[RMDB]
An RNA of 207 nucleotides, treated with DMS and 2A3 and read out base by base.
Conditions: 150 mM KOAc, 10 mM MgCl2 and 150 mM bicine (pH 8.5), 24 C.
2A3 adducts were read by reverse transcription with SuperScript II with manganese.
RNA sequence: GGGAACGACUCGAGUAGAGUCGAAAAGUCUGUGCGUUUCCAUUUGAGUAUCCAGAAAACGGGCUUUUCAGCAUGGAACGUACAUAUUAAAUAGUAGGAGUGCAUAGUGGCCCGUAUAGCAGGCAUUGAGGCGAGGAUUGUUUCGACAAUCCUCGAAGUAUAUCGAAUUAUUCGUAAUUCGAUAUACAAAAGAAACAACAACAACAAC
Reactivity to DMS in 0.01 (KOAc 150mM, MgCl2 10mM, bicine 150mM(pH8.5), 24C), signal-to-noise 4, nucleotides 027 to 156: g020u000c060u000g020u010g010c030g010u000u010u010c010c020a140u000u000u000g010a120g000u000a070u000c040c030a140g010a090a060a090a110c100g000g020g020c050u000u010u010u010c060a180g020c110a060u000g010g000a060a050c020g010u000a040c030a050u000a060u000u000a060a080a170u010a100g010u000a070g000g000a120g030u000g030c030a090u000a110g020u010g010g020c010c020c030g060u000a070u000a070g000c030a040g010g020c030a090u010u000g010a110g010g010c010g020a020g020g010a030u000u000g000u000u000u000c250g020a080c020a010a030u000c000c000u000c000g010a010a090
Reactivity to 2A3 in 0.01 (KOAc 150mM, MgCl2 10mM, bicine 150mM(pH8.5), 24C), signal-to-noise 6, nucleotides 027 to 156: g060u040c030u020g010u010g000c010g000u020u180u050c010c010a020u050u030u050g020a030g020u070a110u120c030c030a060g150a100a160a020a030c090g020g000g020c020u090u080u110u120c070a050g040c030a020u010g010g000a020a000c000g010u000a000c000a000u020a010u000u140a030a080a060u120a030g060u020a020g000g070a030g010u040g030c040a040u060a120g080u060g060g020c030c020c010g020u030a020u030a050g030c040a020g040g000c040a030u040u140g050a050g040g080c010g000a000g000g000a000u000u010g030u010u110u080c090g050a000c000a010a000u000c000c000u000c000g000a010a000